Chemical mapping of a 207-nucleotide RNA with 2A3 and DMS. As a SHAPE reagent, 2A3 marks flexible, mostly unpaired nucleotides at the ribose 2'-OH. DMS adducts were read by reverse transcription with MarathonRT.

RNA sequence: GGGAACGACUCGAGUAGAGUCGAAAAACCUUAUUUUGAGAAGCUGAGGGAUUUGGCCCAUAGAAGCUUCAGCAACCGACUUUAAAUCGCACGGUGCUAAUACCAACGAGCAACUCGAAUGAUAAGUAAAACGUUGACAAGUUCGCUUGUCAACGAAGUUAUAAGUCUUCUUCGGAAGACUUAUAACAAAAGAAACAACAACAACAAC
Reactivity to 2A3 in 0.01 (KOAc 150mM, MgCl2 10mM, bicine 150mM(pH8.5), 24C), signal-to-noise 2, nucleotides 027 to 156: a000c060c000u140u040a190u070u140u120u130g070a050g000a010a000g000c000u010g020a040g040g000g040a060u050u020u110g050g000c000c000c000a060u110a120g070a010a000g000c000u010u010c010a000g000c000a000a070c000c000g020a010c000u080u180u250a020a180a130u160c060g000c060a020c020g010g000u010g000c030u040a020a050u050a090c000c030a020a040c030g060a010g060c070a050a060c050u030c090g080a100a080u110g060a030u080a060a050g040u070a030a100a100a030c000g000u000u000g000a000c000a010a000g000u030u040c070g040c170u000u000g000u000c000a000a000c000g000a010a000
Reactivity to DMS in 0.01 (KOAc 150mM, MgCl2 10mM, bicine 150mM(pH8.5), 24C), signal-to-noise 2, nucleotides 027 to 156: a170c050c040u010u010a070u010u000u000u020g030a160g010a060a300g000c050u000g030a100g000g000g000a240u010u000u000g030g020c000c000c000a130u020a160g010a170a030g040c010u000u000c030a080g010c050a100a120c000c010g000a140c010u010u010u010a070a090a180u000c170g030c060a080c040g000g010u000g030c010u000a080a100u000a110c020c000a010a070c050g020a080g030c050a090a120c010u000c010g020a010a060u000g010a130u010a070a090g010u000a080a060a170a190c010g020u010u000g020a000c000a010a040g000u010u010c300g070c000u000u000g000u000c010a010a010c000g000a010a030